[RMDB]
RNA sequence: GGGAACGACUCGAGUAGAGUCGAAAAGAAGAUGUGUUCGCACAUCUUCAAAAGCAACGACUAGGACCGGCGAGACAAAGGACCGAUAGCUAAUCGCGAGGAAAACAGGCCUCUUCGGAGGCCUGAACUCAUUACUAAAGUUCGCUUUAGUAAUGAGAAAAGAAACAACAACAACAAC
Reactivity to DMS in 0.01 (KOAc 150mM, MgCl2 10mM, bicine 150mM(pH8.5), 24C), signal-to-noise 7, nucleotides 027 to 126: g000a020a000g010a010u000g020u000g010u000u010c190g020c010a010c000a010u000c000u000u000c000a030a060a090a130g010c070a100a060c060g010a060c050u000a070g010g010a050c040c020g000g010c050g010a110g000a090c130a060a090a100g000g010a090c050c020g000a070u000a070g020c040u010a050a090u000c070g000c060g010a100g010g000a060a060a070a210c010a010g000g000c000c000u000c000u000u010c150g020g010a020g010g010c000c000u000g000a010a060
Reactivity to 2A3 in 0.01 (KOAc 150mM, MgCl2 10mM, bicine 150mM(pH8.5), 24C), signal-to-noise 5, nucleotides 027 to 126: g010a000a000g010a000u000g010u010g010u050u110c170g050c070a000c000a000u000c000u010u000c000a010a010a000a000g030c020a020a070c030g070a040c040u060a040g030g060a030c010c030g050g000c020g040a060g020a060c070a070a110a040g070g010a060c020c010g060a080u070a040g060c040u050a090a040u080c020g010c030g050a080g020g080a050a050a020a060c000a000g010g010c010c010u010c000u050u050c180g080g000a000g000g000c000c000u000g000a000a000

Chemical mapping of a 177-nucleotide RNA with DMS and 2A3. For 2A3, 12,452 sequencing reads were counted. For DMS, 11,731 sequencing reads were counted.